This 207-nucleotide RNA was probed chemically with 2A3. It was measured as part of the RMDB library OK3TST. Reactivities are given for positions 27 through 156.
[RMDB]
RNA sequence: GGGAACGACUCGAGUAGAGUCGAAAACAAGUCCUUGGGCUGAUCCCCGAGGUGUGGGUAAUCUGACAUCAAUGCCCAGCAUCCAAAGGGGAAUGGCCAACUCAGGUUAGACCUGGACACAUACACAUCUGAGCAGGUUCAUCUGGGGACGAGCCUGGGUUACAUAGUCGUUCGCGACUAUGUAACCAAAAGAAACAACAACAACAAC
Reactivity to 2A3 in 0.01 (KOAc 150mM, MgCl2 10mM, bicine 150mM(pH8.5), 24C), signal-to-noise 2, nucleotides 027 to 156: c020a000a120g070u040c000c020u080u170g080g000g030c080u060g020a110u100c010c000c000c020g000a030g040g000u020g000u040g000g010g000u090a140a060u160c130u070g180a100c140a060u240c110a100a060u100g030c000c010c040a010g250c010a040u210c040c030a130a150a100g020g000g010g090a000a010u080g020g000c020c000a000a000c020u000c000a000g000g010u090u170a040g040a100c000c030u040g000g100a030c030a000c000a030u300a040c130a000c010a130u100c090u060g010a020g060c030a000g010g050u090u090c020a050u020c040u010g010g000g010g020a000c050g020a010g030c020c030u090g020

For 2A3, 616 sequencing reads were counted.